[RMDB]
RNA sequence: GGGAACGACUCGAGUAGAGUCGAAAAGUGCGCUACCAGCACAGGGCCGCACGCCUCUCCUGCUAGCCGUGUGGCUCUUAAAGAGCCCCACACCCCUCCGCCCUGCGUGCUCCUCCGACCCCCGCCACAUAAUUGCACCGUUCGCGGUGCAAUUAUGAAAAGAAACAACAACAACAAC
Reactivity to DMS in 0.01 (KOAc 150mM, MgCl2 10mM, bicine 150mM(pH8.5), 24C), signal-to-noise 3, nucleotides 027 to 126: g030u000g000c000g010c090u000a130c080c090a180g010c090a030c070a070g010g000g000c040c030g000c030a030c010g010c110c020u020c050u010c020c040u010g010c030u030a070g000c130c060g020u000g020u010g020g000c000u000c010u010u030a030a080a130g000a050g020c030c000c020c030a050c070a190c060c010c000c020u000c020c060g000c030c020c030u010g000c100g010u000g010c000u000c000c010u000c040c030g010a120c040c000c010c010c030g000c040c040a110
Reactivity to 2A3 in 0.01 (KOAc 150mM, MgCl2 10mM, bicine 150mM(pH8.5), 24C), signal-to-noise 4, nucleotides 027 to 126: g040u060g000c040g020c080u150a130c060c040a010g020c020a010c010a020g000g010g010c010c010g010c010a010c000g010c010c000u020c030u030c010c010u040g030c030u040a010g030c020c050g020u020g020u030g020g000c000u010c000u030u070a110a080a020g030a010g010c010c000c000c000a010c000a010c010c020c000c010u020c010c010g000c010c000c010u020g000c020g030u030g000c020u010c000c000u000c000c000g050a050c000c000c000c000c010g030c030c020a040